RNA sequence: GGGAACGACUCGAGUAGAGUCGAAAAGAUAUGGAUCUAGGCUAGCACUCGCAAGUCGGAAACGACUUGAAACGUGCUUGGACCCUAGAGUCCUAAGUCAAAACAGAGUUCGUUCGCGAACUCUGAACGAUUGUCUGUAGUUCGCUACAGACAAUCGAAAAGAAACAACAACAACAAC
Reactivity to DMS in 0.01 (KOAc 150mM, MgCl2 10mM, bicine 150mM(pH8.5), 24C), signal-to-noise 3, nucleotides 027 to 126: g000a060u020a300u000g000g010a280u000c000u000a000g010g000c040u000a030g010c010a000c010u010c300g000c010a010a000g010u010c000g010g000a120a080a190c000g010a020c010u000u000g000a030a050a040c230g030u000g000c000u000u000g020g020a070c300c010c000u000a010g000a020g010u000c000c000u000a040a100g000u010c040a080a050a130a170c010a010g000a030g010u000u000c010g020u000u020c170g010c010g000a000a010c000u000c000u000g010a050a150
Reactivity to 2A3 in 0.01 (KOAc 150mM, MgCl2 10mM, bicine 150mM(pH8.5), 24C), signal-to-noise 1, nucleotides 027 to 126: g050a020u090a000u130g020g000a030u010c000u000a000g040g000c000u000a000g000c010a000c010u040c090g120c030a000a010g000u000c000g010g010a030a080a030c000g000a010c000u000u010g000a000a100a040c170g020u000g010c000u030u070g000g060a050c010c000c010u020a000g020a020g070u010c000c000u000a120a030g070u040c040a050a050a100a120c000a010g010a000g000u000u000c000g050u120u170c250g050c000g180a000a000c000u000c000u000g000a020a030
Structure probing data (DMS and 2A3) for a 177-nucleotide construct. The data come from the RNA Mapping Database (RMDB), library TTRDEL. DMS adducts were read by reverse transcription with MarathonRT. Conditions: 150 mM KOAc, 10 mM MgCl2 and 150 mM bicine (pH 8.5), 24 C.